[RMDB]
Structure probing data (DMS and 2A3) for a 177-nucleotide construct. For 2A3, 10,587 sequencing reads were counted. DMS adducts were read by reverse transcription with MarathonRT. For 2A3 the reverse transcriptase was SuperScript II with manganese.
RNA sequence: GGGAACGACUCGAGUAGAGUCGAAAAGCACCUGGGUUCGCCCAGGUGCAAAGAUCAGUAGCAUGCAAGAUCAAAUCCGAUAGGAUGCUACAGGGAAAGCAAAAAGCCAGUGCUUCGGCACUGGCAACCAUUAUACUAACUUCGGUUAGUAUAAUGGAAAAGAAACAACAACAACAAC
Reactivity to DMS in 0.01 (KOAc 150mM, MgCl2 10mM, bicine 150mM(pH8.5), 24C), signal-to-noise 6, nucleotides 027 to 126: g010c000a000c010c000u010g010g010g020u000u010c240g010c000c000c000a010g010g020u000g010c000a000a020a070g010a090u000c030a100g010u000a010g000c010a010u000g010c100a120a120g000a030u000c060a080a110a220u000c070c040g000a080u010a090g020g010a020u000g000c010u000a010c000a140g000g000g010a090a060a100g010c190a040a060a070a100a070g010c000c000a000g010u000g000c000u000u010c210g020g010c000a000c000u000g000g000c000a000a010
Reactivity to 2A3 in 0.01 (KOAc 150mM, MgCl2 10mM, bicine 150mM(pH8.5), 24C), signal-to-noise 5, nucleotides 027 to 126: g010c000a010c000c000u010g020g000g030u050u080c160g080c030c000c000a010g010g000u000g010c010a010a000a000g010a020u060c030a010g010u010a000g020c010a010u110g080c060a120a060g040a170u030c020a020a100a130u080c050c030g020a030u060a080g120g010a010u000g000c000u010a000c000a020g060g020g020a080a160a070g090c080a060a050a060a050a030g000c010c000a010g000u000g000c000u050u130c200g050g000c000a000c000u010g090g000c000a000a000